[RMDB]
RNA sequence: GGGAACGACUCGAGUAGAGUCGAAAAGUGAGAAAGGAGCUGCCAGCACUAAGCCGGACGGCGCCCUCGCACCAGUUCCGCUGUGGGUUCGCCUACAAGAACGUACGGUGUUGAGGCCCUGUCCGCCGCUGCGCUGCCACCUACUCUUCGCGCCGCUGUUACUGAUGACGUUCGCGUCAUCAGUAACAAAAGAAACAACAACAACAAC
Reactivity to 2A3 in 0.01 (KOAc 150mM, MgCl2 10mM, bicine 150mM(pH8.5), 24C), signal-to-noise 1, nucleotides 027 to 156: g100u040g000a020g020a010a050a020g010g000a020g000c020u020g010c040c000a000g020c030a020c140u220a020a080g080c100c020g020g000a000c000g020g010c070g000c090c020c000u010c000g010c000a010c000c010a020g000u000u010c000c010g010c010u000g000u020g000g020g030u000u100c260g070c040c000u010a000c000a010a080g000a010a000c000g040u200a010c070g020g000u060g040u090u300g030a000g000g010c010c020c020u050g000u020c000c000g000c010c030g000c010u000g000c090g000c010u010g000c000c000a020c000c000u000a010c000u000c000u000u110c100g000c000g060c020c060g010c060u070